[RMDB]
An RNA of 207 nucleotides, treated with 2A3 and read out base by base. Reactivities are given for positions 27 through 156. Conditions: 150 mM KOAc, 10 mM MgCl2 and 150 mM bicine (pH 8.5), 24 C. Reactivities are rounded to 0.1 and cut off at 0 and 3. For 2A3 the reverse transcriptase was SuperScript II with manganese.
RNA sequence: GGGAACGACUCGAGUAGAGUCGAAAACUGCAGGUCAACGGAGUUUCUUCAGAUCAGCUAUUGCAGAAGAAAGGUCAGCCAAGCGCUCUGGGCCAGCUCGACUGUAUAUAGGAGCUUCUGAUUUCAACCAGAAGCUAACUCUCUCCGAAACAAUGAGCAGGGGAGUAUACUUCGGUAUACUCCCCUGAAAAGAAACAACAACAACAAC
Reactivity to 2A3 in 0.01 (KOAc 150mM, MgCl2 10mM, bicine 150mM(pH8.5), 24C), signal-to-noise 1, nucleotides 027 to 156: c040u010g040c090a050g040g000u080c060a040a060c030g020g000a000g040u050u060u020c070u080u060c050a050g010a280u020c010a020g100c000u060a090u140u130g060c020a010g000a140a010g040a070a100a060g030g000u010c010a030g000c040c000a240a050g060c100g020c070u090c090u090g010g020g000c000c000a020g050c020u020c000g000a060c000u000g000u040a080u070a020u050a170g090g010a020g060c000u000u000c020u030g090a130u080u290u250c070a070a040c040c000a000g000a000a000g010c010u040a060a020c010u030c000u000c000u020c030c010g070a060a150a010c050a100a160u070g010a020g040